Structure probing data (2A3) for a 177-nucleotide construct. The RNA was probed in 150 mM KOAc, 10 mM MgCl2 and 150 mM bicine (pH 8.5) at 24 C. 2A3 adducts were read by reverse transcription with SuperScript II with manganese. The data come from the RNA Mapping Database (RMDB), library OK1LIB.
RNA sequence: GGGAACGACUCGAGUAGAGUCGAAAAAGACUGCUCUGCCAAGCGACCGAGCUCGGAAUGAUAGAAUUGGCGGAGGUCGACGAUAUCGGCGUGCAUUGCCUCAAAUGUUAUCAGCCGAGCGUUGGACCAUCCCGUAGGCGUUCGCGCCUACGGGAUGAAAAGAAACAACAACAACAAC
Reactivity to 2A3 in 0.01 (KOAc 150mM, MgCl2 10mM, bicine 150mM(pH8.5), 24C), signal-to-noise 2, nucleotides 027 to 126: a030g060a000c060u100g010c020u010c000u000g000c000c000a030a000g040c010g040a080c040c030g080a000g110c100u100c050g000g100a150a100u120g080a020u110a230g190a240a220u070u060g060g000c000g000g000a010g000g000u020c000g000a000c010g000a000u020a100u210c000g000g010c020g000u030g010c030a020u010u070g060c030c080u190c140a070a020a000u060g010u030u170a040u230c090a030g020c000c000g000a000g000c030g000u040u050g100g020a040c010